An RNA of 177 nucleotides, treated with DMS and 2A3 and read out base by base. The DMS profile rests on 2,035 reads. 2A3 is a SHAPE reagent: it acylates the 2'-hydroxyl of flexible nucleotides of all four kinds. In probing experiments dimethyl sulfate is read out at A N1 and C N3, which are open when not base-paired. Reactivities are given for positions 27 through 126. The RNA was probed in 150 mM KOAc, 10 mM MgCl2 and 150 mM bicine (pH 8.5) at 24 C. For 2A3 the reverse transcriptase was SuperScript II with manganese.

RNA sequence: GGGAACGACUCGAGUAGAGUCGAAAACGCGUUUCUUCGGAAACGCGAAAAGACCUGCCACAACGGCUUCCUGGCGUGGCGAGGGAAACCUUCAAUGGAGCAAAACCAUGGGACUUCGGUCCCAUGGGUAACACAUUGUCUUCGGACAAUGUGUUACAAAAGAAACAACAACAACAAC
Reactivity to DMS in 0.01 (KOAc 150mM, MgCl2 10mM, bicine 150mM(pH8.5), 24C), signal-to-noise 3, nucleotides 027 to 126: c000g010c010g010u010u000u000c000u000u020c210g030g000a020a010a000c010g010c000g000a020a000a300a120g010a080c020c000u000g000c020c010a010c000a050a260c020g000g000c030u010u000c020c010u000g030g000c300g000u000g000g000c010g020a080g000g010g010a050a090a070c200c080u010u010c210a130a040u010g020g000a010g020c060a120a090a120a300c000c000a000u000g000g000g000a000c000u000u020c230g030g010u000c000c000c000a000u000g010g000
Reactivity to 2A3 in 0.01 (KOAc 150mM, MgCl2 10mM, bicine 150mM(pH8.5), 24C), signal-to-noise 3, nucleotides 027 to 126: c010g020c010g010u010u010u000c020u030u040c140g090g000a000a000a000c000g000c000g000a000a010a000a000g000a010c000c010u010g000c000c000a020c000a040a020c030g040g000c000u200u160c000c000u020g000g010c020g010u010g010g000c030g000a030g000g010g000a170a080a070c020c010u160u150c140a110a170u220g020g000a010g000c000a040a010a010a080c010c000a000u000g000g010g000a010c020u030u070c210g060g000u000c000c000c010a000u000g000g000